[RMDB]
Annotation: The record gives the reactivity of an RNA of 177 nucleotides to DMS and 2A3. Reactivities are rounded to 0.1 and cut off at 0 and 3. The RNA was probed in 150 mM KOAc, 10 mM MgCl2 and 150 mM bicine (pH 8.5) at 24 C. Values cover nucleotides 27 to 126. Source: RMDB library OK1LIB, as collected in RNAgym.
RNA sequence: GGGAACGACUCGAGUAGAGUCGAAAAAGAAAAACACGCAAUUCGGAAAAAAUCGAUUGGCGUGGCUUCAGUGCUUGUAGGUACGUUAAUCGGUUUUGGACUACUCAGCAGUAAAGAAGCAGAUGCAUGACUCGUUAGUUUUCGAACUAACGAGUCAAAAAGAAACAACAACAACAAC
Reactivity to DMS in 0.01 (KOAc 150mM, MgCl2 10mM, bicine 150mM(pH8.5), 24C), signal-to-noise 2, nucleotides 027 to 126: a070g010a110a070a070a070a150c040a010c080g000c090a090a140u030u030c100g000g000a010a020a010a010a000a010u000c000g010a000u020u000g010g000c000g010u050g010g000c000u010u040c020a030g000u010g000c140u020u000g010u010a020g010g000u010a000c000g010u010u000a000a000u000c020g040g020u000u000u000u000g020g000a250c050u010a100c090u000c020a100g030c020a060g010u020a040a070a060g010a060a020g020c050a090g020a100u010g000c090a060
Reactivity to 2A3 in 0.01 (KOAc 150mM, MgCl2 10mM, bicine 150mM(pH8.5), 24C), signal-to-noise 3, nucleotides 027 to 126: a010g190a010a090a000a030a010c110a000c050g050c010a020a160u160u140c070g130g000a000a070a000a000a000a070u000c000g000a000u010u000g050g000c000g000u000g000g000c000u060u100c000a090g080u140g270c190u120u020g000u040a030g050g250u010a010c000g000u070u060a000a000u010c000g010g010u020u000u000u050g030g000a000c000u040a040c010u000c030a010g040c010a020g090u080a020a110a160g040a080a000g000c030a000g030a140u130g060c000a000